[RMDB]
This 207-nucleotide RNA was probed chemically with 2A3 and DMS. Conditions: 150 mM KOAc, 10 mM MgCl2 and 150 mM bicine (pH 8.5), 24 C. For 2A3 the reverse transcriptase was SuperScript II with manganese.
RNA sequence: GGGAACGACUCGAGUAGAGUCGAAAAGCUGCACGUCUGUCCUAGCCUCUUCUAUAAGGACACCAGGCAUACAAGACCAUGACCCAGCCUAGCAACCUCACUUUACCUUACUACCUCUGUAAAGACCCUGUCUCCAAAUGCAGUCACCAUCCUAGGAGACUCCGUAUUUAUUCGUAAAUACGGAGUCAAAAGAAACAACAACAACAAC
Reactivity to 2A3 in 0.01 (KOAc 150mM, MgCl2 10mM, bicine 150mM(pH8.5), 24C), signal-to-noise 4, nucleotides 027 to 156: g050c030u050g010c040a020c100g070u040c040u040g050u040c010c010u020a030g000c020c020u070c030u080u060c040u080a160u090a200a080g040g000a010c020a010c030c030a020g030g000c010a030u090a130c040a090a040g020a060c020c010a030u090g010a030c010c010c010a010g010c000c020u020a030g010c020a050a060c010c010u050c020a050c020u060u060u100a050c010c010u050u080a040c020u070a060c010c030u080c050u080g060u100a040a060a080g030a070c010c010c010u030g010u010c000u010c020c000a020a080a000u040g000c010a000g030u050c010a020c110c000a030u130c010c020u060a040g050g040a050
Reactivity to DMS in 0.01 (KOAc 150mM, MgCl2 10mM, bicine 150mM(pH8.5), 24C), signal-to-noise 2, nucleotides 027 to 156: g010c040u000g050c040a100c060g030u010c050u000g000u020c020c020u020a100g000c030c000u000c040u000u010c060u010a160u000a060a110g010g020a090c000a080c030c000a050g000g020c060a140u010a120c050a050a080g040a090c030c010a080u010g000a150c010c010c020a130g010c030c010u000a080g120c020a060a070c070c020u000c030a060c070u000u000u010a050c070c040u010u000a080c030u000a120c030c020u000c050u000g020u000a110a060a050g000a120c020c020c030u000g010u000c000u000c000c030a010a070a050u010g000c010a050g020u010c020a040c020c030a090u010c000c020u010a130g010g020a300